[RMDB]
RNA sequence: GGGAACGACUCGAGUAGAGUCGAAAAAGUGUCCCGGCUAUAAUAAAUCGAUCUUUGCGGGCAGCCCGUUGGCAGGAGGCGUGAGGAAUCCGUCUCUCUGUCUGGUGCGGCAAGGUAGUUCUGGGUCCUUAGGGGCUCCACCUUCACCGCUGUUAGGCCCUUACACGAUCUUCGGAUCGUGUAAGGGAAAAGAAACAACAACAACAAC
Reactivity to 2A3 in 0.01 (KOAc 150mM, MgCl2 10mM, bicine 150mM(pH8.5), 24C), signal-to-noise 1, nucleotides 027 to 156: a000g140u130g080u130c000c030c000g050g000c070u070a060u290a300a120u220a070a150a140u200c130g070a080u030c140u090u220u300g010c000g000g000g030c030a000g040c000c000c000g140u110u230g010g000c010a040g000g010a000g040g000c010g100u300g080a000g000g250a030a050u000c000c000g000u000c000u000c000u000c000u000g010u000c000u000g030g060u210g000c010g000g030c050a000a000g020g050u110a200g030u300u000c120u130g000g030g010u010c000c000u020u150a210g000g000g000g000c000u000c000c000a010c000c010u030u160c120a070c010c010g020c100u060g100u000u030a070g030g000